[RMDB]
This 177-nucleotide RNA was probed chemically with DMS and 2A3. The reactions ran in a buffer of 150 mM KOAc, 10 mM MgCl2 and 150 mM bicine (pH 8.5), at 24 C. It was measured as part of the RMDB library OK2TST. For DMS the reverse transcriptase was MarathonRT.
RNA sequence: GGGAACGACUCGAGUAGAGUCGAAAAAGACAAGCAAGGGAAUUAUUUCCAGAUGAGAAACAUGUCCGAUUUUCUCCAAUCUCUUCUGAAGAGGAUGAUGGUACAAUGUACAUGACCCCCACUGCUCGACUUACCAACAUUUCGAUGUUGGUAAGUCAAAAGAAACAACAACAACAAC
Reactivity to DMS in 0.01 (KOAc 150mM, MgCl2 10mM, bicine 150mM(pH8.5), 24C), signal-to-noise 2, nucleotides 027 to 126: a080g000a110c120a050a060g000c090a030a060g010g000g000a080a100u010u000a140u000u000u000c020c000a090g000a100u010g030a080g000a060a060a050c040a050u000g000u000c020c070g000a080u000u000u020u000c070u010c020c070a050a140u010c010u000c010u000u000c030u000g020a080a120g010a020g010g000a040u000g010a070u000g000g000u000a040c110a080a020u000g010u010a030c010a040u000g000a290c050c010c020c000c010a090c130u020g010c060u010c180
Reactivity to 2A3 in 0.01 (KOAc 150mM, MgCl2 10mM, bicine 150mM(pH8.5), 24C), signal-to-noise 3, nucleotides 027 to 126: a000g050a020c010a020a000g030c010a020a120g090g010g030a080a100u160u090a040u120u210u020c010c000a040g140a230u070g030a070g070a110a140a040c030a060u060g040u080c030c030g050a030u010u000u120u010c080u000c020c040a210a250u040c020u030c000u120u000c060u170g190a290a110g010a050g100g020a070u150g010a010u060g020g010u020a040c090a120a110u120g020u040a010c020a060u220g060a280c010c000c000c010c010a030c030u010g030c020u070c060